Chemical mapping of a 207-nucleotide RNA with 2A3. As a SHAPE reagent, 2A3 marks flexible, mostly unpaired nucleotides at the ribose 2'-OH.

RNA sequence: GGGAACGACUCGAGUAGAGUCGAAAAGAUCUCUUCUCUCCCUCCGCGGUUCUUCCUCGACUCGGACCGGCUCAUCUCGGCUAGAGGCGGCAGUCCUCAGUACUCUUACUCUUUUCUGUAAAGAGGAGACUGCUGGACUCGCCGCCCGAGCCCGAGCGUGGGUAUUAUAGUUCGCUAUAAUACCCACAAAAGAAACAACAACAACAAC
Reactivity to 2A3 in 0.01 (KOAc 150mM, MgCl2 10mM, bicine 150mM(pH8.5), 24C), signal-to-noise 1, nucleotides 027 to 156: g070a070u010c050u040c040u300u070c100u050c050u070c040c010c020u010c070c000g050c020g010g030u000u090c000u120u040c020c010u060c050g070a030c000u010c110g000g050a030c020c040g060g010c010u020c010a200u000c040u010c020g010g000c000u060a040g090a260g160g000c010g010g050c000a000g000u010c000c000u000c000a070g010u100a300c020u020c000u070u120a190c010u010c000u070u100u090u110c100u280g190u300a020a050a020g000a000g000g000a000g010a010c000u000g060c060u020g010g000a000c010u010c070g010c000c000g000c000c000c000g010a000g010c040c050c020g000a010g030c130

Record summary: It was measured as part of the RMDB library VIROID.